About this RNA:
Structure probing data (2A3 and DMS) for a 207-nucleotide construct. It was measured as part of the RMDB library OK3TST. For DMS the reverse transcriptase was MarathonRT. The reactions ran in a buffer of 150 mM KOAc, 10 mM MgCl2 and 150 mM bicine (pH 8.5), at 24 C. Values cover nucleotides 27 to 156. For 2A3 the reverse transcriptase was SuperScript II with manganese. The 2A3 profile rests on 1,779 reads.
[RMDB]
RNA sequence: GGGAACGACUCGAGUAGAGUCGAAAAGUAAGGAUACAGGCACACAUUGGCUCCAUCAUGGGCAAGCUGGGACGAAUCUUCACCCUGCUUUGGUAACCCCCUUCUAUCUGAUAGCCAGGUAAGACAGCAGGAGCAUGAUUCCGCCUUCCUAUGUUAAGUUUUAUUUAGGUUUCGACCUAAAUAAAACAAAAGAAACAACAACAACAAC
Reactivity to 2A3 in 0.01 (KOAc 150mM, MgCl2 10mM, bicine 150mM(pH8.5), 24C), signal-to-noise 3, nucleotides 027 to 156: g060u080a010a060g020g010a030u090a160c100a040g000g040c020a050c000a010c010a090u080u170g080g000c020u000c030c010a110u080c030a050u170g010g000g000c040a030a010g010c040u060g020g000g050a070c060g040a060a090u070c010u160u060c110a080c010c000c010u000g020c010u070u060u090g150g050u160a140a160c030c020c020c050c010u030u000c020u010a040u000c000u010g020a050u100a030g080c070c000a010g010g000u050a170a040g020a040c070a020g040c030a040g000g030a010g010c040a020u030g020a050u060u030c030c010g000c010c000u000u010c000c010u060a060u070g080u030u100a060a090
Reactivity to DMS in 0.01 (KOAc 150mM, MgCl2 10mM, bicine 150mM(pH8.5), 24C), signal-to-noise 2, nucleotides 027 to 156: g010u010a070a060g000g000a170u000a050c110a070g010g000c030a100c120a070c070a130u010u000g040g020c030u020c020c040a130u010c110a130u000g020g020g010c040a080a100g010c030u010g010g000g000a140c080g020a050a100u010c040u000u020c040a050c020c020c010u010g000c020u020u000u000g050g020u010a120a130c040c000c010c010c030u010u000c020u060a040u000c050u020g010a220u000a070g010c110c040a030g060g010u000a060a130g000a070c070a050g020c050a080g000g010a080g040c080a040u000g000a170u000u000c040c030g000c040c010u010u000c010c000u010a090u000g000u000u000a050a210